[RMDB]
Chemical mapping of a 207-nucleotide RNA with 2A3.
RNA sequence: GGGAACGACUCGAGUAGAGUCGAAAACGAUCGGUGAGAAGUCUUUUUCAUUAGCAUGAAUCCAUUCUAAUGAUGUAUGUUUAAACACUCUAAACAAUUGGACAAAUUCUUUUGAUUUGCUUUGAAUGAUUUCAAAUAGGUCUUCGUCUACAGUAGGCUGGCCAGUUAAUUUCGAUUAACUGGCCAGAAAAGAAACAACAACAACAAC
Reactivity to 2A3 in 0.01 (KOAc 150mM, MgCl2 10mM, bicine 150mM(pH8.5), 24C), signal-to-noise 1, nucleotides 027 to 156: c080g040a090u060c050g100g030u050g010a060g010a060a010g110u110c040u030u130u050u100u010c000a010u000u010a000g000c010a000u030g070a250a070u000c100c000a000u010u030c010u030a010a060u050g000a020u040g030u150a020u050g050u000u060u030a020a000a000c050a050c060u030c050u140a050a050a000c040a110a130u070u150g030g010a000c030a020a150a040u070u080c020u010u230u070u050g090a090u030u050u120g020c020u060u090u080g020a050a070u190g010a090u020u090u040c060a120a060a020u050a050g020g020u020c020u040u130c000g080u010c060u080a030c030a050g110u080a000g060g040
2A3 adducts were read by reverse transcription with SuperScript II with manganese. The 2A3 profile rests on 401 reads.